Background:
Chemical mapping of a 177-nucleotide RNA with DMS and 2A3. The reactions ran in a buffer of 150 mM KOAc, 10 mM MgCl2 and 150 mM bicine (pH 8.5), at 24 C. The DMS profile rests on 1,484 reads.
RNA sequence: GGGAACGACUCGAGUAGAGUCGAAAACGCACGCACCUCGUCGGCGACGGGAAAGACGUCGAGAUCGGGGCUGUAGGCGAUCCGGAAGUCGUCGAUCGGGCGCUCGACGGCCCCCCGAUAGUCGAUCCUGACGUUGGAAUUUCGAUUCCAACGUCAGAAAAGAAACAACAACAACAAC
Reactivity to DMS in 0.01 (KOAc 150mM, MgCl2 10mM, bicine 150mM(pH8.5), 24C), signal-to-noise 1, nucleotides 027 to 126: c060g030c030a030c040g000c030a090c060c050u010c050g020u010c030g010g030c050g000a100c010g030g010g000a050a120a180g000a040c000g000u000c010g000a140g000a090u010c080g020g000g020g000c080u010g040u000a180g010g010c000g020a110u000c000c020g000g020a100a140g010u000c070g020u000c050g000a050u000c060g000g000g020c090g030c120u000c030g010a030c000g000g000c000c010c030c000c000c000g010a050u000a050g000u000c020g000a130u000c070
Reactivity to 2A3 in 0.01 (KOAc 150mM, MgCl2 10mM, bicine 150mM(pH8.5), 24C), signal-to-noise 1, nucleotides 027 to 126: c010g000c040a060c100g040c010a010c010c010u050c000g010u030c000g140g100c020g020a020c040g030g000g110a090a160a000g150a050c010g000u010c000g000a010g000a090u170c020g010g030g030g000c030u020g030u020a070g100g090c020g000a040u090c040c010g040g070a100a080g100u070c060g070u030c010g040a020u030c030g100g070g000c100g030c010u070c010g000a020c000g000g000c000c030c000c000c010c000g060a070u080a070g080u020c020g010a020u020c020